The record gives the reactivity of an RNA of 177 nucleotides to 2A3 and DMS.
[RMDB]
RNA sequence: GGGAACGACUCGAGUAGAGUCGAAAAGCAGAUUCACUCUGCACCUGGCUGCAGCUCCAGUCUGGUGCUUUUUCCAUCUGCCAAAGAAACAGUCCAGAAUGCUGUGGCUUCCUCUGCCUAUCAGAGGGGUAUUCACUCUGUUCGCAGAGUGAAUACCAAAAGAAACAACAACAACAAC
Reactivity to 2A3 in 0.01 (KOAc 150mM, MgCl2 10mM, bicine 150mM(pH8.5), 24C), signal-to-noise 9, nucleotides 027 to 126: g000c000a000g010a030u130u170c050a050c150u020c020u020g000c010a020c000c010u010g040g000c000u000g000c010a050g010c010u050c100c010a060g090u020c000u010g020g010u130g030c000u010u010u000u010u000c040c020a090u060c070u160g120c040c050a100a100a020g030a010a030a010c020a000g000u000c020c000a010g030a040a050u110g020c000u010g000u020g010g010c010u050u030c000c000u000c000u010g010c030c050u160a130u240c010a000g000a010g010g010
Reactivity to DMS in 0.01 (KOAc 150mM, MgCl2 10mM, bicine 150mM(pH8.5), 24C), signal-to-noise 4, nucleotides 027 to 126: g020c030a010g010a010u000u010c160a070c190u010c040u000g010c000a160c020c010u000g010g010c000u010g000c040a020g000c020u040c210c190a110g010u000c010u000g000g000u030g000c000u010u000u000u000u000c050c090a130u010c080u020g040c100c190a070a110a100g020a030a010a020c070a010g000u000c010c000a020g020a080a060u030g000c000u000g010u000g000g000c020u010u040c010c000u000c010u000g000c180c120u020a180u010c020a000g000a000g000g000

For DMS the reverse transcriptase was MarathonRT.
Source: RMDB libraries RFM100 and RFMREP, as collected in RNAgym.